[RMDB]
RNA sequence: GGGAACGACUCGAGUAGAGUCGAAAAGGCUGUUUCGACAGCCGACGGCGCGUACUACAAGCGCUAACAAGCUUGGAUUUAUACAGAUUCCCAAAUAGGAGCCUGUAUUGUCAGCUUGGACCCGCUUGUAUCGCAAAACCUUCGCUUCGGCGAAGAAGAUAGCUGCACCAUUCGUGGUGCAGCUAUCAAAAGAAACAACAACAACAAC
Reactivity to 2A3 in 0.01 (KOAc 150mM, MgCl2 10mM, bicine 150mM(pH8.5), 24C), signal-to-noise 1, nucleotides 027 to 156: g000g000c000u000g070u000u160u110c140g090a020c020a000g010c050c000g000a000c000g050g170c020g000c020g050u080a080c030u000a000c030a010a020g000c000g000c040u030a000a070c010a000a000g000c030u230u300g110g000a100u300u300u080a040u050a000c000a000g000a000u010u010c000c000c000a140a300a150u300a260g010g000a000g000c000c000u000g010u020a000u010u000g000u010c000a000g000c000u000u000g000g000a000c000c060c000g000c000u000u000g000u010a010u090c030g000c000a040a010a030a110c000c000u000u010c010g000c000u110u040c190g130g000c000g010a000a000g040a010a000
This 207-nucleotide RNA was probed chemically with 2A3. The data come from the RNA Mapping Database (RMDB), library RNAMAK. Values cover nucleotides 27 to 156.